[RMDB]
RNA sequence: GGGAACGACUCGAGUAGAGUCGAAAACGUUACCACAGGGGGGGCUUCUUAGCUGAGAUUGAGUCCACGUGUUUUUGGAUUCUGACCCUUUGAACCUGUUCGUUAAUACGAGCGUAGGGAUUGUGGCCACCAACUUGGGUUUCGACCCAAGUUGGUGAAAAGAAACAACAACAACAAC
Reactivity to DMS in 0.01 (KOAc 150mM, MgCl2 10mM, bicine 150mM(pH8.5), 24C), signal-to-noise 2, nucleotides 027 to 126: c070g050u000u050a210c030c040a040c040a020g000g010g000g030g000g010g000c010u030u040c060u020u040a130g030c020u020g010a000g030a120u060u040g010a050g000u000c000c000a040c270g010u000g010u010u020u010u010u010g000g000a040u020u000c010u000g010a060c000c000c010u030u000u020g000a030a060c000c000u020g000u020u010c010g020u000u040a060a130u020a080c020g040a050g010c020g000u000a050g000g000g030a070u020u010g010u010g000g000c240
Reactivity to 2A3 in 0.01 (KOAc 150mM, MgCl2 10mM, bicine 150mM(pH8.5), 24C), signal-to-noise 3, nucleotides 027 to 126: c000g120u080u120a060c000c030a030c050a030g010g000g010g000g010g000g030c000u050u020c040u180u300a020g000c000u020g040a000g010a010u000u050g010a010g000u010c010c000a040c090g180u230g220u060u090u000u110u150g010g010a020u000u000c010u010g000a020c000c000c000u050u140u070g020a000a020c000c000u000g000u000u020c000g000u040u210a150a010u180a120c000g010a030g020c080g040u140a030g000g000g040a010u010u210g000u010g040g000c030
An RNA of 177 nucleotides, treated with DMS and 2A3 and read out base by base.
Source: RMDB library RFM100, as collected in RNAgym.
The 2A3 profile rests on 1,282 reads.